[RMDB]
RNA sequence: GGGAACGACUCGAGUAGAGUCGAAAAGAAGAGAAUACGGUGUAAGAACAGCCCAACUUACACCGUGCGGCAUAACGGAAACACUGAUGUCGAAACUUGGGCUGGUCGUGAAUGAACGAAAGAAGAAAUCAGCCUGGGUAUUCGUACCCAGGCUGAUAAAAGAAACAACAACAACAAC
Reactivity to 2A3 in 0.01 (KOAc 150mM, MgCl2 10mM, bicine 150mM(pH8.5), 24C), signal-to-noise 2, nucleotides 027 to 126: g070a040a010g220a020g000a120a000u060a090c000g020g030u000g010u000a000a000g010a200a000c000a010g000c000c000c000a030a070c000u000u000a000c010a010c030c010g000u000g010c000g020g000c020a020u000a050a110c060g060g000a010a140a000c080a000c230u050g030a080u010g030u030c020g040a110a000a000c060u000u040g000g000g000c000u000g000g010u050c000g000u000g130a220a300u210g000a110a000c070g110a120a010a050g120a080a010g030a060a110